[RMDB]
RNA sequence: GGGAACGACUCGAGUAGAGUCGAAAAUGUCACUUGAGGUGAGUACAGGGUGGAGACACUAAUGUCACUUGAAGUGAGUACAUGGUGGAGACACUAUGUACUCACUUGCAGUAAGUGACUGCAAUUGUACUCACCAGCAGUAAGUGACUGCUGAGAACGAUACCACGUAUUUCGAUACGUGGUAUCGAAAAGAAACAACAACAACAAC
Reactivity to DMS in 0.01 (KOAc 150mM, MgCl2 10mM, bicine 150mM(pH8.5), 24C), signal-to-noise 3, nucleotides 027 to 156: u000g000u000c010a030c010u000u000g000a270g000g020u000g010a030g040u000a020c020a040g010g010g040u000g010g020a300g000a300c020a060c020u000a070a130u000g010u000c010a010c010u000u010g000a030a040g010u010g000a010g030u000a010c020a000u000g000g020u000g020g020a300g010a300c010a010c000u000a020u000g020u010a000c010u000c000a000c000u000u000g020c150a230g030u000a030a030g020u000g000a020c000u000g030c120a090a280u000u000g010u000a020c020u000c000a040c000c000a030g030c070a110g020u000a080a060g000u000g010a080c000u010g000c010u000g010a150g010a110a260
Reactivity to 2A3 in 0.01 (KOAc 150mM, MgCl2 10mM, bicine 150mM(pH8.5), 24C), signal-to-noise 4, nucleotides 027 to 156: u090g010u000c000a010c010u020u060g090a030g060g000u000g000a000g010u000a000c000a020g070g000g030u010g010g050a080g010a010c000a000c020u100a160a080u150g000u010c000a000c000u010u030g040a000a010g010u000g000a000g000u000a000c000a000u010g010g000u000g000g020a040g000a030c000a000c000u010a010u000g000u010a000c000u000c000a000c000u000u000g000c000a040g040u160a090a010g000u000g000a000c000u020g020c050a010a140u150u030g000u010a000c000u000c000a000c000c000a000g020c000a010g040u130a040a010g000u000g020a010c000u010g020c070u100g050a090g060a130a010
An RNA of 207 nucleotides, treated with DMS and 2A3 and read out base by base. Reactivities are given for positions 27 through 156. The data come from the RNA Mapping Database (RMDB), library OK3TST. Conditions: 150 mM KOAc, 10 mM MgCl2 and 150 mM bicine (pH 8.5), 24 C.